[RMDB]
Structure probing data (2A3) for a 207-nucleotide construct.
RNA sequence: GGGAACGACUCGAGUAGAGUCGAAAACGCCCCUGGAGAAGGGACCUUCCCUUUGGGGUCGGAACCCAGAAAGGAGGGGCCUGCGAUCCGCGGAGCUCCUUGUUCUUGGGAUAACACAGCUCUGGCUUGGAGGCCCCCUUGCACUUCGACUCUGGUAGCAGUAAUAGUGAUUCGUCACUAUUACUGCAAAAGAAACAACAACAACAAC
Reactivity to 2A3 in 0.01 (KOAc 150mM, MgCl2 10mM, bicine 150mM(pH8.5), 24C), signal-to-noise 2, nucleotides 027 to 156: c050g040c010c000c010c010u050g020g030a150g040a060a020g030g010g030a080c010c050u110u150c000c010c050u020u030u050g030g000g000g010u050c020g000g050a080a080c030c030c020a040g060a030a040a040g020g030a090g000g010g010g010c000c000u100g000c010g040a110u070c050c060g000c130g050g000a030g010c010u020c100c000u070u020g070u100u050c090u050u120g050g000g020a100u080a140a010c040a000c080a030g010c000u010c020u100g060g030c040u000u110g000g130a000g000g030c040c060c000c000c000u000u050g000c040a030c040u020u020c050g040a030c040u020c030u070g010g040u060a030

The 2A3 profile rests on 982 reads.
The data come from the RNA Mapping Database (RMDB), library OK3TST.